[RMDB]
RNA sequence: GGGAACGACUCGAGUAGAGUCGAAAAGAAUGUUACCAUUGAGCGACCAAUGGUAACAUGAUUGCCAUCCUUGAGUAUUGACGCUACAAUACUGGAUCAUAAGCGACUAUGAUGAAGGAUGGCAAUGCUAACUACAUGGUCGCUUAUGUGGUUAGGAAUCGGUAUUAGCAUUCGUGCUAAUACCGAUAAAAGAAACAACAACAACAAC
Reactivity to DMS in 0.01 (KOAc 150mM, MgCl2 10mM, bicine 150mM(pH8.5), 24C), signal-to-noise 2, nucleotides 027 to 156: g020a140a030u020g010u000u010a000c000c010a040u000u000g020a160g010c230g010a180c080c010a000a010u000g020g020u000a000a000c000a010u000g010a070u000u000g000c000c000a010u000c010c020u000u000g010a040g030u000a030u010u010g010a230c180g030c280u010a220c020a020a050u000a030c010u010g020g000a100u000c010a110u000a040a090g020c040g000a020c030u000a120u010g010a130u010g010a100a050g020g020a050u000g020g000c010a000a000u000g000c030u000a030a060c030u000a020c010a040u010g020g040u000c010g000c000u000u010a030u000g010u000g000g010u010u000a060g020g010a170
Reactivity to 2A3 in 0.01 (KOAc 150mM, MgCl2 10mM, bicine 150mM(pH8.5), 24C), signal-to-noise 3, nucleotides 027 to 156: g090a050a060u010g000u000u010a000c000c000a010u000u030g040a080g130c110g090a090c060c010a030a020u010g000g000u000a000a000c000a000u010g010a000u000u010g000c000c000a000u000c010c000u000u100g080a000g030u040a020u020u020g100a090c110g080c170u180a100c110a000a000u000a010c020u040g060g080a060u050c000a010u000a050a000g000c000g020a010c010u050a050u150g070a050u090g070a020a000g000g000a000u000g000g000c000a000a000u010g000c000u010a020a000c020u010a010c010a020u080g020g000u000c000g000c000u010u000a010u000g010u000g030g010u010u040a030g010g090a080